The record gives the reactivity of an RNA of 177 nucleotides to DMS and 2A3. DMS adducts were read by reverse transcription with MarathonRT. It was measured as part of the RMDB libraries RFM100 and RFMREP. 2A3 adducts were read by reverse transcription with SuperScript II with manganese.
RNA sequence: GGGAACGACUCGAGUAGAGUCGAAAACGUGAGCAGGAGUAUCGAAGAGGAUUAGAGACCCACGUAGUUCCUUGCAGUCAACGAUGCCAACGUAGUGGUGAUUUUGGUCAUUGCUAGAGCGAAAGCUUUAUUGAAUUAUCUUCGGAUAAUUCAAUAAAAAAGAAACAACAACAACAAC
Reactivity to DMS in 0.01 (KOAc 150mM, MgCl2 10mM, bicine 150mM(pH8.5), 24C), signal-to-noise 9, nucleotides 027 to 126: c050g020u000g000a080g030c100a080g000g010a080g010u010a050u010c040g010a120a130g010a120g010g010a070u000u020a140g010a160g010a080c050c010c010a070c050g000u010a110g010u010u000c000c010u000u020g030c050a100g010u000c060a070a090c050g010a060u010g000c030c050a060a120c150g000u000a040g020u010g000g020u000g000a040u000u010u020u030g010g010u000c010a030u000u000g000c010u000a040g000a090g000c030g000a090a080a110g010c040u010
Reactivity to 2A3 in 0.01 (KOAc 150mM, MgCl2 10mM, bicine 150mM(pH8.5), 24C), signal-to-noise 9, nucleotides 027 to 126: c020g030u040g030a030g010c030a020g010g060a050g050u080a060u130c030g030a130a040g080a100g090g010a020u050u090a070g050a020g040a130c000c020c000a030c020g030u030a040g040u030u010c000c000u010u120g000c030a030g050u060c020a050a040c030g040a040u090g040c010c010a040a030c090g040u050a030g020u020g040g030u020g030a040u060u060u130u240g160g010u020c000a010u000u020g000c010u020a020g010a020g100c030g050a070a040a020g010c000u030